[RMDB]
Background:
Chemical mapping of a 177-nucleotide RNA with DMS. It was measured as part of the RMDB library OK2TST.
RNA sequence: GGGAACGACUCGAGUAGAGUCGAAAAACAUGUUAGGAGAAAUCCAACCAUGGGCGGACCCAAGGUGGCGGCCCCGACACAGCCGGCAAGAGGAAUAACCUUCGGGUGACCUCUGGGUCCAUUUCUCUAAAUAAGAGGGGUUCGCCCCUCUUAUUUAAAAAGAAACAACAACAACAAC
Reactivity to DMS in 0.01 (KOAc 150mM, MgCl2 10mM, bicine 150mM(pH8.5), 24C), signal-to-noise 3, nucleotides 027 to 126: a130c010a020u000g000u000u000a300g000g000a000g010a130a090a200u020c000c000a060a150c300c010a020u000g000g010g000c120g020g000a030c020c000c010a110a120g010g010u000g010g020c010g010g000c020c010c060c030g010a070c160a080c300a180g010c060c000g020g030c050a100a070g000a020g000g010a000a130u020a210a120c000c000u000u000c220g030g000g010u000g000a090c010c000u000c040u000g010g010g000u000c010c020a060u000u000u000c020u010c040